[RMDB]
RNA sequence: GGGAACGACUCGAGUAGAGUCGAAAACAAACACCAGCGCCCAGGAAGAAAAACCAAAACGUGAACUACUUGACAAAACACGAACGCUCGUGUAAUUCGACAAGAAACAAAAACAAAACAAACAAAAGAUAUAUAUGCACUUCGGUGCAUAUAUAUCAAAAGAAACAACAACAACAAC
Reactivity to DMS in 0.01 (KOAc 150mM, MgCl2 10mM, bicine 150mM(pH8.5), 24C), signal-to-noise 2, nucleotides 027 to 126: c180a060a180a150c100a070c000c020a000g030c050g030c000c010c000a060g000g030a020a030g000a070a100a130a140a080c080c060a050a080a080a120c090g000u000g000a100a090c060u010a060c000u000u010g020a050c120a120a080a000a100c000a030c010g000a060a080c190g000c240u020c030g000u030g010u010a000a220u000u040c020g000a050c090a040a040g000a110a120a050c090a000a020a000a010a050c220a090a030a110a050c160a100a070a070c160a150a030a070a030
Reactivity to 2A3 in 0.01 (KOAc 150mM, MgCl2 10mM, bicine 150mM(pH8.5), 24C), signal-to-noise 5, nucleotides 027 to 126: c010a000a120a000c010a010c010c000a000g010c000g010c000c000c010a010g090g020a070a070g080a030a080a040a010a010c050c050a060a050a040a050c050g020u060g080a010a030c040u100a050c020u130u030g050a040c030a030a100a070a000c010a010c020g030a100a030c100g080c170u020c020g010u030g010u080a070a090u110u100c030g030a020c050a030a060g120a090a080a010c080a070a120a080a030a010c070a010a070a030a020c070a060a120a000c020a010a110a020a010
Structure probing data (DMS and 2A3) for a 177-nucleotide construct. Conditions: 150 mM KOAc, 10 mM MgCl2 and 150 mM bicine (pH 8.5), 24 C. It was measured as part of the RMDB library OK1LIB. 2A3 adducts were read by reverse transcription with SuperScript II with manganese. For DMS the reverse transcriptase was MarathonRT.